[RMDB]
RNA sequence: GGGAACGACUCGAGUAGAGUCGAAAAUAAGCUGACCAGCUAUGAGGUCAUACAUCGUCAUAGGACUAAGAAGAGAGAUCUUCGAGGACAGAGAUGUCCAAGACGACGAGAACAUCGUCGUCGAUACGAACUGGUCGAAUUUCGAUUUGACUAGUUCAAAAGAAACAACAACAACAAC
Reactivity to 2A3 in 0.01 (KOAc 150mM, MgCl2 10mM, bicine 150mM(pH8.5), 24C), signal-to-noise 9, nucleotides 027 to 126: u130a010a010g060c030u010g010a010c000c000a000g020c000u010a010u020g020a000g000g000u000c010a010u090a050c050a070u070c060g070u000c000a010u020a020g030g010a030c020u040a050a010g000a010a000g010a000g000a000g010a040u000c000u000u000c010g030a030g000g000a000c000a000g040a000g000a020u020g000u000c000c000a020a030g000a000c000g000a000c000g000a000g020a070a070c090a160u010c000g000u000c000g000u000c010g000a010u040a060c090
Reactivity to DMS in 0.01 (KOAc 150mM, MgCl2 10mM, bicine 150mM(pH8.5), 24C), signal-to-noise 8, nucleotides 027 to 126: u040a060a080g010c130u020g000a040c010c000a140g010c040u010a010u020g010a060g000g010u000c050a060u040a100c170a060u010c100g000u000c010a050u000a030g000g000a130c240u010a090a110g000a010a010g000a010g000a150g010a120u000c000u000u000c000g010a130g010g000a020c000a020g000a150g000a090u000g010u000c020c020a100a080g000a010c000g000a010c000g000a020g010a190a170c300a100u000c010g010u000c000g010u000c010g000a130u050a070c270
This 177-nucleotide RNA was probed chemically with 2A3 and DMS. Source: RMDB library OK1LIB, as collected in RNAgym. The 2A3 profile rests on 54,864 reads. The DMS profile rests on 23,502 reads.